RNA sequence: GGGAACGACUCGAGUAGAGUCGAAAAGAUAUGGACGUCUCUGGAUGGCCUUAUAAGGGAGGCUAAGUUUCGGAAACGAAAUGAUGGCCGAAGAACUUAUAAGGCCAUCCAGAGGACGUCCUAAGUCGACGUAAAAAAUGUUCGCAUUUUUUACGUCAAAAGAAACAACAACAACAAC
Reactivity to DMS in 0.01 (KOAc 150mM, MgCl2 10mM, bicine 150mM(pH8.5), 24C), signal-to-noise 3, nucleotides 027 to 126: g000a100u000a300u010g000g000a010c010g030u000c010u000c010u020g000g010a020u000g010g000c000c000u000u010a000u000a000a000g020g000g000a080g020g040c000u000a090a300g010u000u000u000c000g010g010a100a110a240c010g000a000a010a010u000g000a180u030g020g010c000c010g000a040a120g000a160a210c020u000u000a010u000a010a010g000g000c000c000a000u000c000c000a000g000a000g020g020a010c000g010u000c010c000u000a010a110g010u000c120